[RMDB]
RNA sequence: GGGAACGACUCGAGUAGAGUCGAAAACUUCAUACCGUGACCUCCUGAAAGAUUACUUUGAUGACAAUGUCAUUAACAAUGUUGAGUAUUUGACAUCUAUAAGGUAUAACACACCUUCGGGUAGUGGUCAUUGCGGUACAUUCGUGUACCGCAAUGAAAAAGAAACAACAACAACAAC
Reactivity to DMS in 0.01 (KOAc 150mM, MgCl2 10mM, bicine 150mM(pH8.5), 24C), signal-to-noise 3, nucleotides 027 to 126: c060u000u010c060a130u000a110c100c030g000u000g010a080c060c020u000c010c020u000g000a090a070a090g010a110u000u000a040c050u000u000u000g000a040u000g000a070c100a100a070u010g010u000c000a030u000u000a090a090c130a080a090u020g020u010u000g000a100g010u000a090u000u010u000g020a050c010a020u010c030u010a110u020a040a060g000g000u000a010u000a130a100c090a090c150a070c040c010u010u020c120g000g010g020u000a070g020u000g000g020
Reactivity to 2A3 in 0.01 (KOAc 150mM, MgCl2 10mM, bicine 150mM(pH8.5), 24C), signal-to-noise 2, nucleotides 027 to 126: c010u080u100c040a060u080a140c060c010g020u020g060a040c000c000u000c000c000u040g060a050a030a000g100a030u060u020a050c000u000u090u090g050a060u030g010a010c040a090a080u090g000u040c040a080u010u030a070a030c070a140a210u200g080u150u140g110a130g100u040a120u040u050u040g030a010c000a010u000c010u040a140u030a220a020g040g000u010a040u070a170a020c070a000c000a000c020c030u010u010c010g120g000g030u050a090g040u020g060g030

This 177-nucleotide RNA was probed chemically with DMS and 2A3.
Conditions: 150 mM KOAc, 10 mM MgCl2 and 150 mM bicine (pH 8.5), 24 C.